[RMDB]
RNA sequence: GGGAACGACUCGAGUAGAGUCGAAAAGCGUACUACUGCUCAGGCAAAGGGAGCAAAUGAAGUUGCUGUUCCCAAAUAGGAACAGCAUCACAUUUGCUUUGAUCUUUGUAUUGGAGCAGUAUCGCAAAAACCGUCCUAAGUUCGCUUAGGACGGUAACCUCUUUUGAAUCUUCGGAUUCAAAAGAGGAAAAGAAACAACAACAACAAC
Reactivity to DMS in 0.01 (KOAc 150mM, MgCl2 10mM, bicine 150mM(pH8.5), 24C), signal-to-noise 1, nucleotides 027 to 156: g010c010g050u000a020c060u000a000c000u000g000c000u000c000a150g000g050c000a040a030a030g000g030g000a030g000c000a010a000a040u010g020a100a240g070u000u000g050c020u000g020u000u000c000c010c010a020a100a300u010a040g000g010a030a010c010a000g000c000a000u000c020a300c040a020u000u000u000g000c000u000u000u000g020a110u000c010u000u000u000g020u000a100u010u000g030g000a000g040c010a060g020u010a000u000c010g000c010a060a060a050a150a040c000c000g020u010c000c000u020a000a020g020u000u000c300g030c020u000u000a000g000g000a000c000g000g000u000a000a020
Reactivity to 2A3 in 0.01 (KOAc 150mM, MgCl2 10mM, bicine 150mM(pH8.5), 24C), signal-to-noise 4, nucleotides 027 to 156: g010c010g020u080a080c100u000a000c000u020g000c000u010c010a020g050g050c000a010a000a000g030g010g000a000g020c000a000a000a000u080g030a260a030g040u020u010g000c000u010g000u010u020c010c010c010a140a200a080u260a040g000g000a000a000c000a000g000c000a000u010c010a010c000a000u000u010u000g020c000u210u070u030g050a060u030c000u000u020u040g060u060a300u100u270g210g010a000g000c000a000g000u000a000u000c000g000c000a100a030a030a030a040c000c000g000u000c010c000u000a010a010g000u030u110c140g050c190u000u000a000g000g020a000c010g010g000u040a000a000

Chemical mapping of a 207-nucleotide RNA with DMS and 2A3. The DMS profile rests on 2,836 reads. Conditions: 150 mM KOAc, 10 mM MgCl2 and 150 mM bicine (pH 8.5), 24 C. It was measured as part of the RMDB library RNAMAK.